[RMDB]
RNA sequence: GGGAACGACUCGAGUAGAGUCGAAAAGCAUUUAUUAUGCAUGUUUCUUGGUACAUUAUGUUCGGGCCUAUCGUUCCCAUAUGGAUGACCUGCGUCUAUACAGUUGCAAUGUGCUUUAGACACUUCUCGUAACAUUUAUCUUCGGAUAAAUGUUACGAAAAGAAACAACAACAACAAC
Reactivity to 2A3 in 0.01 (KOAc 150mM, MgCl2 10mM, bicine 150mM(pH8.5), 24C), signal-to-noise 2, nucleotides 027 to 126: g000c000a020u000u140u080a180u270u210a050u140g030c030a060u080g060u010u050u010c000u040u070g010g050u060a030c000a030u030u100a100u170g040u030u070c010g030g040g060c000c040u080a090u090c010g000u000u000c010c000c020a010u070a040u050g030g000a000u000g050a020c010c010u050g030c050g010u000c020u000a070u030a080c030a100g010u080u040g050c040a050a070u070g020u030g010c010u050u080u080a010g000a010c000a010c030u000u000c000u000
Reactivity to DMS in 0.01 (KOAc 150mM, MgCl2 10mM, bicine 150mM(pH8.5), 24C), signal-to-noise 1, nucleotides 027 to 126: g000c010a020u000u010u010a090u040u000a030u000g000c020a110u010g000u000u000u000c020u020u000g030g040u010a050c020a080u000u010a060u000g050u010u000c080g000g030g030c220c050u010a060u000c030g020u000u000c000c000c030a110u000a040u010g010g000a060u010g010a070c030c010u040g000c070g000u000c020u000a010u010a060c150a040g000u000u000g000c060a040a070u000g010u000g010c050u000u000u010a090g020a120c180a060c030u000u010c040u000
Chemical mapping of a 177-nucleotide RNA with 2A3 and DMS. DMS (dimethyl sulfate) methylates the pairing face of unpaired adenines and cytosines. Conditions: 150 mM KOAc, 10 mM MgCl2 and 150 mM bicine (pH 8.5), 24 C. Source: RMDB library 15KREP, as collected in RNAgym. For 2A3 the reverse transcriptase was SuperScript II with manganese. The 2A3 profile rests on 1,481 reads.